RNA sequence: GGGAACGACUCGAGUAGAGUCGAAAACAAUGCAGGUUAAGCCAAAGGGAUGUCCCGACCGGAGACCGACAAUCCAGGGAACCGGAUGUCAUCACGUUGUUGCAGUACCAGAUGGCAUCUUAAAUCCAAAAGAACACAUAGUUCGCUAUGUGUUCAAGCCUCAUAUCUAGUUCGCUAGAUAUGAGGCAAAAGAAACAACAACAACAAC
Reactivity to DMS in 0.01 (KOAc 150mM, MgCl2 10mM, bicine 150mM(pH8.5), 24C), signal-to-noise 1, nucleotides 027 to 156: c050a050a130u000g050c140a160g040g000u000u010a050a230g070c060c040a050a200a100g020g000g000a140u000g010u020c000c010c000g010a130c030c070g010g020a210g040a140c000c040g020a100c170a070a080u000c030c010a080g000g000g000a090a060c050c030g000g010a030u000g010u000c010a010u000c040a170c230g030u000u000g000u000u010g000c000a060g000u000a030c050c040a140g000a050u010g010g010c010a000u000c020u020u010a010a040a060u000c020c060a030a080a060a150g000a010a010c000a030c000a020u000a010g010u000u000c300g040c010u000a010u000g010u000g030u000u000c000a020a060
Reactivity to 2A3 in 0.01 (KOAc 150mM, MgCl2 10mM, bicine 150mM(pH8.5), 24C), signal-to-noise 2, nucleotides 027 to 156: c050a000a190u200g020c050a030g070g000u070u130a080a000g090c030c010a130a120a030g080g000g020a070u100g070u050c000c000c020g040a050c010c030g020g000a040g030a060c050c010g070a020c060a100a080u040c010c040a080g000g000g000a030a060c000c020g000g000a000u010g000u010c020a000u000c000a020c110g020u040u040g000u000u020g020c030a060g080u090a080c050c000a020g000a000u000g000g010c000a000u000c000u020u040a030a050a010u030c000c000a050a040a020a100g000a000a000c000a000c000a000u000a000g010u020u060c050g010c120u000a000u000g020u010g000u000u000c000a010a000